[RMDB]
RNA sequence: GGGAACGACUCGAGUAGAGUCGAAAAUACGCGAGGUUCGCCUCGCGUAAAAGAGGAGCGUAAACGUGAGCGUACGUACUGCUGUACAUCGUUCCUACACGAAUGCACAUGGUUUCGACCAUGUGAACAGGUUGUUUGAAUUCGUUCAAACAACCUGAAAAGAAACAACAACAACAAC
Reactivity to DMS in 0.01 (KOAc 150mM, MgCl2 10mM, bicine 150mM(pH8.5), 24C), signal-to-noise 5, nucleotides 027 to 126: u000a000c000g010c000g020a020g000g030u000u020c200g010c010c010u000c000g000c000g020u000a010a020a080a110g010a110g010g010a080g020c030g030u010a030a040a050c100g010u010g000a140g020c200g010u000a060c080g020u000a090c060u010g000c060u010g010u000a100c160a140u000c000g000u000u000c000c010u000a080c160a070c190g000a100a110u010g000c000a010c000a030u000g000g000u000u000u010c190g000a020c000c000a000u010g010u000g000a040a140
Reactivity to 2A3 in 0.01 (KOAc 150mM, MgCl2 10mM, bicine 150mM(pH8.5), 24C), signal-to-noise 5, nucleotides 027 to 126: u040a000c000g000c000g000a000g030g030u040u080c170g070c040c000u000c000g000c000g000u000a000a000a000a000g130a030g040g030a030g030c020g050u120a060a100a090c060g020u060g110a060g070c050g030u060a030c060g030u040a050c070u120g060c030u050g020u080a030c010a040u020c020g000u000u000c000c000u040a040c070a000c050g190a150a040u230g030c000a000c000a000u000g000g020u000u070u080c100g040a020c010c000a000u000g010u000g000a030a020